[RMDB]
RNA sequence: GGGAACGACUCGAGUAGAGUCGAAAACCGAGUGAGUUCGCUCACUCGGAAAGAAGUGUGCGCAUACUGCUGCGACAGUUGCGACAAGAGCAGCAAGCAAAAAAACAAACCUGUUCGCAGGUUUGAAGGUAGAUUUGAACUUCGGUUCAAAUCUACCAAAAGAAACAACAACAACAAC
Reactivity to DMS in 0.01 (KOAc 150mM, MgCl2 10mM, bicine 150mM(pH8.5), 24C), signal-to-noise 1, nucleotides 027 to 126: c000c000g010a030g000u000g010a000g000u020u000c180g010c030u000c010a010c020u030c000g000g010a010a000a110g000a090a050g020u000g010u020g000c010g040c090a080u000a110c030u010g000c020u000g000c080g000a080c120a060g000u000u000g000c030g000a060c040a050a180g000a210g010c040a010g000c080a040a050g000c140a000a000a030a110a080a090a130c000a000a000a030c000c000u010g000u000u010c180g000c000a020g050g000u000u000u000g000a030a050
Reactivity to 2A3 in 0.01 (KOAc 150mM, MgCl2 10mM, bicine 150mM(pH8.5), 24C), signal-to-noise 1, nucleotides 027 to 126: c000c000g010a030g000u020g000a000g000u010u210c240g070c090u010c000a000c000u000c000g010g040a030a010a010g040a070a020g090u060g050u100g230c000g020c010a030u100a200c020u010g010c050u120g070c030g010a010c030a000g030u030u000g020c050g020a030c000a050a020g040a010g030c060a020g040c000a020a060g030c140a000a000a100a060a000a000a080c010a000a000a000c000c020u000g030u060u060c240g030c060a020g000g000u000u000u060g030a010a030
The record gives the reactivity of an RNA of 177 nucleotides to DMS and 2A3. The DMS profile rests on 783 reads. Conditions: 150 mM KOAc, 10 mM MgCl2 and 150 mM bicine (pH 8.5), 24 C.